This 177-nucleotide RNA was probed chemically with DMS and 2A3. Reactivities are given for positions 27 through 126. DMS adducts were read by reverse transcription with MarathonRT.

RNA sequence: GGGAACGACUCGAGUAGAGUCGAAAAGAUAUGGAACGUUGCUUUUGACGCUUCUGUGAUGGAUCGGAAACGAUCUAUGGAGCGAUAAGCACCGUUCCUAAGUCGCAAACACUGCUUCGGCAGUGAACCACUCAUAAUUCUUCGGAAUUAUGAGUGGAAAAGAAACAACAACAACAAC
Reactivity to DMS in 0.01 (KOAc 150mM, MgCl2 10mM, bicine 150mM(pH8.5), 24C), signal-to-noise 5, nucleotides 027 to 126: g010a040u000a300u000g000g000a020a000c000g000u010u000g000c000u000u000u020u000g010a210c070g010c010u010u000c000u000g010u000g020a150u010g020g000a000u010c000g000g000a080a060a150c000g010a010u000c000u010a060u000g000g000a010g010c010g020a110u000a010a010g010c000a020c050c000g010u000u000c000c000u000a010a080g000u000c020g010c220a110a100a210c010a010c010u000g010c000u000u010c190g010g010c000a010g010u000g000a050a180
Reactivity to 2A3 in 0.01 (KOAc 150mM, MgCl2 10mM, bicine 150mM(pH8.5), 24C), signal-to-noise 8, nucleotides 027 to 126: g000a010u040a010u110g000g000a000a000c000g010u000u010g000c020u120u160u190u300g260a120c040g010c010u030u020c030u050g220u120g160a190u300g070g000a000u000c000g000g010a020a020a030c010g000a000u000c010u010a090u120g010g000a010g010c020g210a260u070a150a000g010c000a000c010c000g000u010u000c000c000u000a010a020g000u000c010g000c120a030a140a050c010a000c000u000g020c000u050u080c280g150g000c010a000g000u010g000a010a030